[RMDB]
RNA sequence: GGGAACGACUCGAGUAGAGUCGAAAAGUACUACCGUUCGCGGUAGUACAAAUAAUCCAGCCUGCAAAGGCUGGAGCCAAAACUAUGGUAAAGGCACCAUAGAAAGAGCAGAGUUCGCUCUGCUCAACCAUCCAGACUAGUUCGCUAGUCUGGAUGGAAAAGAAACAACAACAACAAC
Reactivity to 2A3 in 0.01 (KOAc 150mM, MgCl2 10mM, bicine 150mM(pH8.5), 24C), signal-to-noise 2, nucleotides 027 to 126: g000u000a010c000u000a020c010c010g020u020u040c260g030c000g080g000u000a010g000u000a000c000a000a000a010u090a000a010u000c010c000a000g020c000c000u020g030c080a100a040a020g000g010c000u000g000g000a000g000c000c020a020a060a030a100c000u010a010u010g010g020u080a070a170a300g220g040c080a010c020c000a020u010a010g090a090a120a000g000a010g000c000a000g000a000g030u050u060c180g060c060u000c010u020g000c000u000c000a000a000
Reactivity to DMS in 0.01 (KOAc 150mM, MgCl2 10mM, bicine 150mM(pH8.5), 24C), signal-to-noise 2, nucleotides 027 to 126: g010u010a010c000u000a010c000c000g030u000u010c250g000c020g030g010u000a010g000u000a000c010a020a080a030u010a130a200u000c010c000a010g020c000c010u000g010c300a130a080a030g000g020c000u000g000g000a030g000c030c040a070a060a100a150c010u000a000u000g030g000u030a070a070a110g070g010c100a030c000c000a020u010a000g000a080a150a060g000a020g010c010a000g000a010g000u010u010c300g010c000u010c000u000g010c010u000c000a030a040